Chemical mapping of a 177-nucleotide RNA with 2A3 and DMS. For 2A3, 23,279 sequencing reads were counted. 2A3 adducts were read by reverse transcription with SuperScript II with manganese. DMS adducts were read by reverse transcription with MarathonRT. The reactions ran in a buffer of 150 mM KOAc, 10 mM MgCl2 and 150 mM bicine (pH 8.5), at 24 C. As a SHAPE reagent, 2A3 marks flexible, mostly unpaired nucleotides at the ribose 2'-OH.
RNA sequence: GGGAACGACUCGAGUAGAGUCGAAAACGUAGCCCAAGACUUCGUCCUCGGCGCACGGGAAGUUGCGCUGGUCGAAGGGAUCAGCGGUGACCGAUACCUCCGAGCCCACGGGGGCCGGGGUACUCAAGCAGUACAAUAAUUUCGAUUAUUGUACUGCAAAAGAAACAACAACAACAAC
Reactivity to 2A3 in 0.01 (KOAc 150mM, MgCl2 10mM, bicine 150mM(pH8.5), 24C), signal-to-noise 9, nucleotides 027 to 126: c020g040u040a010g030c010c000c010a020a030g130a060c020u020u010c010g010u020c010c050u100c100g020g000c010g020c010a020c030g090g040g180a230a080g110u210u050g000c010g000c040u050g010g000u000c000g010a020a040g050g010g000a140u140c080a020g040c050g140g040u050g030a050c020c050g020a020u020a050c010c010u080c020c020g030a070g020c010c040c010a100c140g300g000g000g000g020c010c000g000g010g010g010u030a040c040u030c050a020a040
Reactivity to DMS in 0.01 (KOAc 150mM, MgCl2 10mM, bicine 150mM(pH8.5), 24C), signal-to-noise 9, nucleotides 027 to 126: c120g010u000a230g020c010c010c020a180a160g010a090c020u000u000c030g010u000c010c030u010c110g010g010c010g010c020a020c020g010g010g010a110a150g010u010u000g000c010g020c000u000g020g010u000c010g000a040a050g000g010g020a070u000c140a100g010c090g010g010u010g010a110c100c050g000a180u000a040c020c010u010c010c010g010a170g010c010c000c010a200c280g010g000g010g000g010c020c010g010g000g010g010u000a020c090u000c050a100a200